An RNA of 177 nucleotides, treated with 2A3 and DMS and read out base by base. For 2A3, 2,092 sequencing reads were counted. For DMS, 2,586 sequencing reads were counted.

RNA sequence: GGGAACGACUCGAGUAGAGUCGAAAAGCGAUCAAUAAUAAGUCGACCACUCGAAAGAGUCCCAUGGAAACAUGCCUACUAAUGCGUCCAAUGUAGGUCGACGAUUAGGACGCAGAAGAUCGCGAAAAAUGGACUGGUAGUUCGCUACCAGUCCAUUAAAAGAAACAACAACAACAAC
Reactivity to 2A3 in 0.01 (KOAc 150mM, MgCl2 10mM, bicine 150mM(pH8.5), 24C), signal-to-noise 2, nucleotides 027 to 126: g020c000g000a000u030c040a050a000u070a190a030u150a190a000g010u000c000g000a000c000c000a000c000u010c000g010a100a050a080g030a020g030u010c060c010c000a000u050g050g030a100a030a000c010a030u070g060c040c030u070a070c030u050a180a000u040g000c030g000u000c000c000a000a050u100g020u040a010g000g010u000c020g010a000c000g000a000u020u030a000g000g000a010c000g000c010a000g010a000a000g010a000u010c010g010c000g050a100a000a000
Reactivity to DMS in 0.01 (KOAc 150mM, MgCl2 10mM, bicine 150mM(pH8.5), 24C), signal-to-noise 3, nucleotides 027 to 126: g060c000g000a010u000c020a150a100u000a100a080u020a110a160g000u000c010g010a020c090c000a070c000u000c030g000a150a090a150g010a000g050u000c170c300c060a090u000g000g000a180a090a080c070a000u020g010c300c200u060a030c060u040a110a090u010g000c000g030u000c000c000a000a120u040g000u000a040g010g000u000c000g010a090c030g020a070u010u000a130g000g020a030c000g010c000a060g020a060a150g000a000u000c000g020c020g020a030a060a040